Source: RMDB library TTRDEL, as collected in RNAgym. Chemical mapping of a 177-nucleotide RNA with DMS. Values are in units of 0.01, from 0 to 300, in steps of 10. For DMS the reverse transcriptase was MarathonRT.
[RMDB]
RNA sequence: GGGAACGACUCGAGUAGAGUCGAAAAGAUAUGGAGUAUCGUGGGCUGAUGACCUCGGAAACGAGCAAGGCUGGCCACGAGUACUCCUAAGUCGAAAGUAUUACCUUGGUUCGCCAAGGUAAUACAACUCGUUGGCUCAGUUCGCUGAGCCAACGAGAAAAGAAACAACAACAACAAC
Reactivity to DMS in 0.01 (KOAc 150mM, MgCl2 10mM, bicine 150mM(pH8.5), 24C), signal-to-noise 1, nucleotides 027 to 126: g010a030u000a300u040g000g000a040g000u000a020u000c000g020u000g030g000g000c000u000g000a020u020g010a300c300c000u000c000g000g010a180a120a140c000g020a010g000c020a020a230g010g000c050u000g010g000c000c000a010c000g000a040g040u000a020c000u000c000c000u000a010a100g000u000c030g000a100a190a110g030u000a000u000u000a020c000c030u000u000g000g000u020u000c170g060c000c010a000a000g020g010u000a000a000u000a000c020a060a060